[RMDB]
RNA sequence: GGGAACGACUCGAGUAGAGUCGAAAAGAUAUGGACGGAUUGUCGCUGAUGACCCAUGUUAUGGUUCGGCUAUAUCGGAAACGAUAUAGCCGAAACGUCAUGGCAAGGCGACAUUCCGUCCUAAGUCCUACGUCAAAAUGUUCGCAUUUUGACGUAGAAAAGAAACAACAACAACAAC
Reactivity to 2A3 in 0.01 (KOAc 150mM, MgCl2 10mM, bicine 150mM(pH8.5), 24C), signal-to-noise 4, nucleotides 027 to 126: g040a040u070a030u180g010g000a000c000g020g000a020u000u030g000u020c000g010c010u050g070a300u110g020a060c000c010c040a020u040g090u190u300a240u220g110g110u110u300c010g000g030c000u010a000u000a000u020c010g020g030a050a040a030c010g010a000u010a000u000a010g000c020c000g000a000a000a000c000g010u020c020a000u000g000g030c050a130a300g000g020c000g000a000c010a000u000u010c000c000g000u000c000c000u000a020a000g000u000c010
Reactivity to DMS in 0.01 (KOAc 150mM, MgCl2 10mM, bicine 150mM(pH8.5), 24C), signal-to-noise 4, nucleotides 027 to 126: g010a090u000a200u000g000g000a010c000g000g000a020u000u000g010u000c010g010c000u010g000a080u010g000a130c300c000c000a020u000g010u010u010a040u000g010g000u000u000c000g000g000c010u000a010u000a000u000c000g000g000a110a090a140c010g010a010u000a000u000a010g000c010c000g010a000a000a000c000g000u000c020a010u000g000g030c040a060a080g010g020c000g000a000c000a000u000u000c010c010g020u010c000c000u000a000a090g010u010c020